An RNA of 177 nucleotides, treated with DMS and read out base by base. For DMS, 883 sequencing reads were counted.
RNA sequence: GGGAACGACUCGAGUAGAGUCGAAAAUCUCUCUUGUUCGCAAGAGAGAAAAGUACGCCAAAGUGACGCAAACUUCCGCGUCAGGAAGGCGAAACGAGGUAAAAAGGGGGAUCUUCGGAUCCCCCAAGUUUGAAAUCAUCUUCGGAUGAUUUCAAACAAAAGAAACAACAACAACAAC
Reactivity to DMS in 0.01 (KOAc 150mM, MgCl2 10mM, bicine 150mM(pH8.5), 24C), signal-to-noise 1, nucleotides 027 to 126: u000c010u000c000u000c010u000u000g030u020u000c220g030c000a000a000g020a000g000a010g000a000a000a080a140g000u010a100c030g030c010c000a010a200a300g000u010g000a040c000g010c000a030a110a190c160u010u000c260c130g010c100g000u000c020a000g010g000a140a160g040g000c020g000a010a110a020c100g000a080g000g000u010a000a030a050a090a140g000g000g000g000g000a000u000c030u010u010c220g060g000a010u020c000c000c000c000c000a000a000